[RMDB]
RNA sequence: GGGAACGACUCGAGUAGAGUCGAAAACUUUACAACAGCACCUCAUGAAGACCUAUUUUUACCACGGUGUACUUCAAGAUCAGAUACAUCUCCUUGCUCCUGAGGUCCGAGAUGGGAGUCAAGUGUGCACGUGCAGUAUUUUCGAAUACUGCACGUGAAAAGAAACAACAACAACAAC
Reactivity to 2A3 in 0.01 (KOAc 150mM, MgCl2 10mM, bicine 150mM(pH8.5), 24C), signal-to-noise 2, nucleotides 027 to 126: c000u150u130u120a030c010a140a000c000a050g030c030a020c000c030u050c020a040u050g080a040a000g020a050c020c000u040a180u050u140u030u140u170a130c080c040a060c090g080g000u050g020u020a080c020u070u090c040a060a010g050a150u080c030a030g030a050u040a070c020a040u040c050u050c040c020u000u040g000c000u020c000c000u040g040a030g040g010u000c000c040g110a180g000a060u220g010g000g020a040g090u070c050a040a040g030u080g070u040g170
Reactivity to DMS in 0.01 (KOAc 150mM, MgCl2 10mM, bicine 150mM(pH8.5), 24C), signal-to-noise 3, nucleotides 027 to 126: c060u000u000u000a080c090a090a160c130a100g020c050a050c050c030u000c050a080u000g010a100a100g000a060c040c020u000a050u000u000u010u010u010a100c140c060a130c140g010g000u010g000u000a050c070u000u000c080a070a060g010a100u020c120a070g020a110u000a040c090a040u000c020u000c070c010u010u000g000c030u010c030c020u000g010a070g000g020u000c080c060g010a090g000a080u010g010g000g000a040g000u000c060a050a070g020u010g020u010g000
Notes: An RNA of 177 nucleotides, treated with 2A3 and DMS and read out base by base. The reactions ran in a buffer of 150 mM KOAc, 10 mM MgCl2 and 150 mM bicine (pH 8.5), at 24 C. For 2A3, 1,826 sequencing reads were counted.